Source: RMDB library OK3TST, as collected in RNAgym. Structure probing data (2A3 and DMS) for a 207-nucleotide construct. The reactions ran in a buffer of 150 mM KOAc, 10 mM MgCl2 and 150 mM bicine (pH 8.5), at 24 C.
[RMDB]
RNA sequence: GGGAACGACUCGAGUAGAGUCGAAAACAUGGUAUGGCCUCGCAUCCGGCCUACCUACAGAAUCAACAACUUUGGAUGCGGUGGGCGAGAGCCCUAAGAAGGAGUCUCCCCGCCUGGGGAGCUCCGUAUGACUUAAUGUAUUACCAGGCGUAUACAAGGUCGUAUAAUUAUUCGUAAUUAUACGACCAAAAGAAACAACAACAACAAC
Reactivity to 2A3 in 0.01 (KOAc 150mM, MgCl2 10mM, bicine 150mM(pH8.5), 24C), signal-to-noise 4, nucleotides 027 to 156: c030a030u070g000g010u060a090u300g000g000c020c000u060c040g000c000a000u000c000c000g000g010c000c000u000a000c000c000u030a020c030a100g200a080a100u210c070a050a130c040a040a100c090u190u150u110g000g000a000u000g000c000g010g050u020g010g000g010c020g010a030g010a050g080c000c000c000u010a020a020g030a010a040g000g010a010g040u060c020u010c040c000c000c010g000c000c000u010g000g000g000g000a000g000c000u010c000c000g000u010a050u030g030a000c030u060u130a170a060u220g100u220a120u140u140a050c010c000a000g010g010c020g060u090a100u060a180c080a110a060
Reactivity to DMS in 0.01 (KOAc 150mM, MgCl2 10mM, bicine 150mM(pH8.5), 24C), signal-to-noise 2, nucleotides 027 to 156: c030a170u000g030g010u000a020u020g060g000c040c000u020c040g000c040a060u000c010c010g050g020c020c000u000a010c000c000u010a300c060a130g000a190a000u000c080a050a100c140a080a120c100u020u000u030g040g010a010u000g000c070g040g010u000g010g000g060c050g000a280g000a200g010c010c000c010u000a040a090g000a220a100g000g000a060g010u010c010u000c000c000c000c000g010c170c090u000g000g020g030g000a030g000c010u000c000c030g000u010a010u020g020a110c090u010u010a130a100u010g090u000a080u000u000a020c050c040a080g000g030c010g000u000a140u000a060c090a110a180